[RMDB]
Conditions: 150 mM KOAc, 10 mM MgCl2 and 150 mM bicine (pH 8.5), 24 C. An RNA of 207 nucleotides, treated with 2A3 and read out base by base. For 2A3, 612 sequencing reads were counted.

RNA sequence: GGGAACGACUCGAGUAGAGUCGAAAAGCUUUUAGUUUAGUGGGUACGUCUAGGAAUAUGUGUGGUAUGGGGAAACAGGUGUUGCCUAUUGUGGUGCCUGCUGUGUCACCGUAUGCAGAUGGAAGUCCUGUUAAGGCAACUGCUUCUGCUUGUAGUGCGAGGAGUCGAGUUUCGACUCGACUCCUCGAAAAGAAACAACAACAACAAC
Reactivity to 2A3 in 0.01 (KOAc 150mM, MgCl2 10mM, bicine 150mM(pH8.5), 24C), signal-to-noise 2, nucleotides 027 to 156: g060c050u090u170u030u120a050g040u120u060u130a040g000u060g030g000g030u060a040c040g030u080c080u080a070g060g000a070a050u110a100u060g060u030g010u030g040g000u080a050u090g030g010g030g030a010a150a010c030a010g070g000u050g030u020u120g020c000c000u100a140u050u240g070u010g050g020u030g020c040c000u070g000c030u020g040u030g000u060c020a020c200c010g000u080a050u090g000c000a010g030a080u090g070g110a130a000g040u080c020c010u030g040u160u080a090a030g010g000c040a030a010c040u050g000c000u040u040c010u030g170c020u110u060g080u100a060g010u050g070